The data come from the RNA Mapping Database (RMDB), library RFM100.
Structure probing data (DMS) for a 177-nucleotide construct.
For DMS, 2,563 sequencing reads were counted.
The reactions ran in a buffer of 150 mM KOAc, 10 mM MgCl2 and 150 mM bicine (pH 8.5), at 24 C.

RNA sequence: GGGAACGACUCGAGUAGAGUCGAAAAGAGAGGGUAACCACCGGCGCGCGUCACUGAUAUAUCCACCGGGGGGUAAGGGGAGAAAAGGAUACAGCGCGACGAAGUUAGCACGCUGCCCCGUAAGGCUGCAAUCUACACUUUUCGAAGUGUAGAUUGCAAAAGAAACAACAACAACAAC
Reactivity to DMS in 0.01 (KOAc 150mM, MgCl2 10mM, bicine 150mM(pH8.5), 24C), signal-to-noise 2, nucleotides 027 to 126: g020a130g020a050g000g000g010u000a040a100c080c040a040c120c010g000g050c020g070c030g000c000g000u020c130a100c140u000g030a160u030a080u060a050u030c010c030a120c010c060g030g050g000g020g000g000u010a060a050g000g000g000g010a080g000a020a050a050a120g010g000a060u000a060c090a080g000c020g000c070g000a050c110g000a080a080g000u030u000a060g000c050a060c040g000c050u010g000c000c000c000c070g000u050a010a060g010g000c030u010